Structure probing data (2A3 and DMS) for a 177-nucleotide construct. The RNA was probed in 150 mM KOAc, 10 mM MgCl2 and 150 mM bicine (pH 8.5) at 24 C.
[RMDB]
RNA sequence: GGGAACGACUCGAGUAGAGUCGAAAAGUUCACACGACAACACAAUUUCAUUUGUGCCAAUCAUUCUAACAAAGUAUACCUCGGUCUCAGUGAUGGCAUACUUUGCUGGAUUGAUUGGUACACAUGAGCAACAAAAUGAUUUCGAUCAUUUUGUUGCAAAAGAAACAACAACAACAAC
Reactivity to 2A3 in 0.01 (KOAc 150mM, MgCl2 10mM, bicine 150mM(pH8.5), 24C), signal-to-noise 9, nucleotides 027 to 126: g040u090u080c040a060c020a010c130g120a050c060a180a020c040a020c030a180a170u060u140u040c000a010u000u010u000g000u000g000c000c000a000a000u000c000a000u010u000c000u010a010a010c000a000a000a000g000u000a000u010a020c000c010u030c040g140g110u100c170u060c210a140g070u150g170a070u180g020g000c000a000u000a000c000u010u000u000g000c000u000g000g010a000u000u000g000a000u000u000g000g000u000a000c000a000c000a000u010g000a000
Reactivity to DMS in 0.01 (KOAc 150mM, MgCl2 10mM, bicine 150mM(pH8.5), 24C), signal-to-noise 3, nucleotides 027 to 126: g010u010u020c050a070c070a200c120g000a060c070a030a030c060a070c300a120a100u030u030u010c000a010u000u000u000g020u000g000c000c000a020a000u000c000a020u000u000c000u000a010a040c000a000a010a010g000u000a020u000a040c020c010u000c020g030g010u030c190u010c230a150g030u040g010a050u010g010g030c030a000u000a000c020u000u000u000g010c090u020g000g000a020u000u000g030a010u000u000g000g010u000a000c010a000c040a000u000g000a020